An RNA of 177 nucleotides, treated with 2A3 and DMS and read out base by base. For 2A3 the reverse transcriptase was SuperScript II with manganese. For DMS, 5,651 sequencing reads were counted. The reactions ran in a buffer of 150 mM KOAc, 10 mM MgCl2 and 150 mM bicine (pH 8.5), at 24 C. Reactivities are given for positions 27 through 126.
RNA sequence: GGGAACGACUCGAGUAGAGUCGAAAACGAGGCUGGGAGGGGCGAGAGAGUGUGCAGGGUACGCAGUGGGUGAAUAAGUGAGUCAGGUAGAGAGCCCAGUUCUCCUGGGCCCCAGGUGUGCCAGCAGGAAGAAUAGGACAUUCGUGUCCUAUUCUUCAAAAGAAACAACAACAACAAC
Reactivity to 2A3 in 0.01 (KOAc 150mM, MgCl2 10mM, bicine 150mM(pH8.5), 24C), signal-to-noise 3, nucleotides 027 to 126: c010g000a040g090g030c090u050g040g000g030a140g060g030g000g020c060g000a050g010a000g000a010g050u150g020u070g080c050a030g050g000g000u040a030c050g000c040a040g050u060g040g040g000u050g030a050a060u160a150a020g070u040g130a030g070u060c050a030g000g040u170a050g040a010g000a010g100c000c000c000a010g010u090u080c050u050c060c000u020g000g040g020c000c010c000c010a030g000g060u040g010u040g040c030c010a030g030c000a000g130
Reactivity to DMS in 0.01 (KOAc 150mM, MgCl2 10mM, bicine 150mM(pH8.5), 24C), signal-to-noise 4, nucleotides 027 to 126: c110g000a070g010g020c100u010g010g000g010a130g000g010g000g020c050g000a070g000a090g010a080g030u000g000u000g010c080a120g010g010g010u020a060c100g020c030a070g020u000g000g000g000u000g000a070a070u000a060a090g020u010g000a070g010u010c040a040g010g000u000a070g010a080g010a120g000c020c000c010a060g000u010u010c170u010c170c020u000g010g000g020c010c040c000c020a070g010g010u000g010u000g010c030c020a090g010c080a120g010